[RMDB]
RNA sequence: GGGAACGACUCGAGUAGAGUCGAAAAGUCGUAGAGGGUGAGAGUCCCGUAGACGAAAACAUGGUGACUGUCGUGACGGACACCCGAGUAGCAGCGGGCCCGUGAAAUCUGCUGUGAAUCUGUCGGGACACUUUUCUUUAUUCGUAAAGAAAAGUGUAAAAGAAACAACAACAACAAC
Reactivity to DMS in 0.01 (KOAc 150mM, MgCl2 10mM, bicine 150mM(pH8.5), 24C), signal-to-noise 9, nucleotides 027 to 126: g010u010c030g010u020a080g010a230g000g010g020u010g010a140g000a200g010u010c000c000c020g000u020a100g010a050c060g000a080a070a080a090c130a060u010g000g010u010g010a070c080u010g010u010c020g020u010g010a050c070g000g000a090c060a090c010c000c030g000a060g010u000a190g000c020a020g000c030g010g000g000c050c010c030g020u030g000a040a050a130u010c010u000g010c010u000g010u000g000a100a110u020c090u010g010u000c010g010g000g010
Reactivity to 2A3 in 0.01 (KOAc 150mM, MgCl2 10mM, bicine 150mM(pH8.5), 24C), signal-to-noise 8, nucleotides 027 to 126: g040u020c020g030u070a040g040a100g180g010g010u030g030a060g000a010g110u030c010c000c010g000u010a020g020a020c020g020a050a020a010a020c040a060u140g060g020u110g080a080c080u060g020u050c030g060u080g040a020c000g030g000a010c010a020c030c000c000g010a020g010u040a000g010c020a000g010c000g010g020g000c010c030c020g090u090g050a050a050a030u020c010u020g000c000u010g010u020g020a020a050u060c070u080g070u050c000g010g020g010
Structure probing data (DMS and 2A3) for a 177-nucleotide construct. The reactions ran in a buffer of 150 mM KOAc, 10 mM MgCl2 and 150 mM bicine (pH 8.5), at 24 C. For 2A3 the reverse transcriptase was SuperScript II with manganese.